RNA sequence: GGGAACGACUCGAGUAGAGUCGAAAACUUAAUUUUACGGAUAGUGCCGUAUUUGCUAAAGAGGGUGUUAUAACACUUAAAACGUUGUCUAAUACCUUCAAAUUCUCUUGUAGCAACUCAUCGACAUACCAGGCACCAUAUGUCAUACCUUUUGGUCCCUGGCUGUUCUAUUCGUAGAACAGCCAGGAAAAGAAACAACAACAACAAC
Reactivity to 2A3 in 0.01 (KOAc 150mM, MgCl2 10mM, bicine 150mM(pH8.5), 24C), signal-to-noise 2, nucleotides 027 to 156: c020u070u080a080a110u140u160u070u150a030c010g040g030a060u100a200g050u050g060c000c000g040u090a080u030u110u070g000c040u100a080a080a000g000a010g000g000g020u000g030u050u030a020u020a140a000c030a010c020u080u150a070a000a070a000c080g050u050u060g040u020c020u040a020a020u010a000c000c000u090u140c060a030a000a080u210u010c030u000c010u040u080g150u070a010g050c010a000a120c030u020c140a150u120c060g060a070c010a040u070a120c040c020a030g000g000c030a010c010c010a020u060a100u200g060u070c020a060u120a190c000c000u070u170u020u250g020g000u000c050